[RMDB]
RNA sequence: GGGAACGACUCGAGUAGAGUCGAAAAAUGACCACCCACGCCGUGAUCAUCACCUAUCUCCGCGACCAGACGCAGCCCGCCGUCGAUGCGAUCGGCGGGUUCUACCGGACAUGCGUACUGACUGGCAAUCAACAAUGCCAUUCGUGGCAUUGUUGAUAAAAGAAACAACAACAACAAC
Reactivity to DMS in 0.01 (KOAc 150mM, MgCl2 10mM, bicine 150mM(pH8.5), 24C), signal-to-noise 3, nucleotides 027 to 126: a010u060g000a150c040c040a050c020c000c000a100c190g010c060c080g010u030g000a070u000c040a050u000c040a030c030c040u010a120u020c050u000c030c030g020c080g000a080c030c000a070g010a070c090g020c080a110g000c000c000c020g020c000c000g000u040c030g020a120u010g030c110g110a060u050c020g010g020c000g030g000g010u010u000c060u000a090c190c050g000g000a100c130a070u010g000c010g000u010a050c070u020g020a060c030u030g000g020c000a050
Reactivity to 2A3 in 0.01 (KOAc 150mM, MgCl2 10mM, bicine 150mM(pH8.5), 24C), signal-to-noise 4, nucleotides 027 to 126: a000u110g040a040c010c000a040c020c000c000a050c050g060c030c000g070u050g030a050u010c060a020u030c030a040c020c000u030a070u040c020u000c020c010g040c050g090a080c040c010a000g020a040c020g010c050a010g020c020c000c010g020c020c000g010u020c010g100a200u280g160c080g060a080u070c030g010g010c000g000g010g000u000u000c010u030a020c010c000g010g020a040c010a120u070g010c020g010u020a110c040u030g080a040c030u030g020g050c000a010